Structure probing data (2A3 and DMS) for a 177-nucleotide construct. For 2A3 the reverse transcriptase was SuperScript II with manganese. For DMS, 1,453 sequencing reads were counted. For DMS the reverse transcriptase was MarathonRT.

[RMDB]
RNA sequence: GGGAACGACUCGAGUAGAGUCGAAAAGAUUGGAAUUUGGCUCGGCGAAGGCUUGAUCGGCCUGGUGACUCAAACCAUCAAUGAUUUCUAUUUUGUCAUCAAUGUUCGCAAUGUGUCCGUCUCCGCCGGAAGUGGCAUAUUUCGAUAUGCCACUUCCAAAAGAAACAACAACAACAAC
Reactivity to 2A3 in 0.01 (KOAc 150mM, MgCl2 10mM, bicine 150mM(pH8.5), 24C), signal-to-noise 2, nucleotides 027 to 126: g070a060u120u210g050g080a020a060u060u060u120g030g010c030u010c070g030g000c030g000a020a010g000g000c030u100u100g030a100u120c040g000g000c000c000u020g000g010u010g020a020c010u050c140a110a050a060c040c030a070u090c020a080a120u110g050a060u140u150u000c050u100a220u030u150u070u060g030u010c010a000u000c040a030a120u130g070u080u000c000g000c010a040a080u140g030u040g020u090c010c020g000u000c000u010c020c010g010c000c040
Reactivity to DMS in 0.01 (KOAc 150mM, MgCl2 10mM, bicine 150mM(pH8.5), 24C), signal-to-noise 2, nucleotides 027 to 126: g030a190u010u000g030g010a120a160u010u010u000g000g020c080u000c050g000g020c030g000a090a100g030g000c010u010u000g010a080u000c220g010g000c000c030u010g010g040u000g000a030c010u000c110a040a060a070c130c010a100u000c150a050a070u010g010a050u000u010u000c070u010a160u010u010u000u000g010u000c020a040u010c020a050a130u000g010u010u000c070g000c040a130a130u000g000u000g020u010c010c090g000u010c050u010c020c040g000c250c130